An RNA of 177 nucleotides, treated with 2A3 and DMS and read out base by base. Values are in units of 0.01, from 0 to 300, in steps of 10. DMS adducts were read by reverse transcription with MarathonRT. It was measured as part of the RMDB library OK1LIB.
[RMDB]
RNA sequence: GGGAACGACUCGAGUAGAGUCGAAAAGAGCUAAUAUCUACUUCGUUUGUGCAUACGUUCAAGCUGACUAUACCGAAGCUGAAGGGUUGCGAGAAAUCGCAGUAGGUAGUCGAAUGAACGGCUCGAAGGGUUAAGUUUUCUUCGGAAAACUUAACCCAAAAGAAACAACAACAACAAC
Reactivity to 2A3 in 0.01 (KOAc 150mM, MgCl2 10mM, bicine 150mM(pH8.5), 24C), signal-to-noise 2, nucleotides 027 to 126: g060a010g050c090u150a080a070u110a150u140c040u040a110c020u040u050c030g130u000u040u160g080u030g040c010a030u030a240c050g010u010u000c010a040a010g010c040u030g020a030c010u100a080u100a200c010c040g070a110a020g040c060u110g030a030a110g130g060g020u060u030g000c040g000a060g050a070a050a000u100c010g000c010a010g010u020a010g000g050u000a000g010u000c000g000a020a000u010g020a010a020c020g010g000c000u000c000g070a110a160
Reactivity to DMS in 0.01 (KOAc 150mM, MgCl2 10mM, bicine 150mM(pH8.5), 24C), signal-to-noise 2, nucleotides 027 to 126: g010a070g010c030u030a210a110u020a060u020c000u000a030c020u000u000c010g000u050u000u000g000u060g000c070a020u000a300c000g000u050u000c000a020a020g010c010u070g000a140c110u000a070u020a120c110c020g000a180a190g010c090u000g000a070a060g000g020g010u020u000g000c000g000a010g010a170a010a130u020c060g000c050a000g050u010a030g060g060u000a010g000u000c020g000a300a250u000g010a000a060c080g000g000c010u000c000g030a150a110